Overview: Structure probing data (2A3) for a 177-nucleotide construct. For 2A3 the reverse transcriptase was SuperScript II with manganese. The data come from the RNA Mapping Database (RMDB), libraries RFM100 and RFMREP.

RNA sequence: GGGAACGACUCGAGUAGAGUCGAAAAAUGGCGCAGUGACGUACAAUCCCUUUCCACAACAUUGAAGAACAAGCAUGUCCUCGGCCAUUAGGCUGUUGUGGGCAGCGUCCUGUAUAUUCCUACAACUCUCGUCCAAAGUUUUCGAACUUUGGACGAGAAAAGAAACAACAACAACAAC
Reactivity to 2A3 in 0.01 (KOAc 150mM, MgCl2 10mM, bicine 150mM(pH8.5), 24C), signal-to-noise 4, nucleotides 027 to 126: a000u070g060g000c030g000c020a010g040u050g290a020c000g030u050a030c070a020a100u100c010c010c000u020u050u010c040c010a080c030a090a000c000a060u050u180g140a160a050g050a090a000c070a060a030g130c090a150u150g020u040c000c000u020c000g010g010c020c000a050u120u170a020g000g040c030u050g000u110u030g000u010g000g000g000c000a000g010c000g000u020c010c010u000g050u010a090u020a010u090u060c000c000u020a020c000a080a060c050u030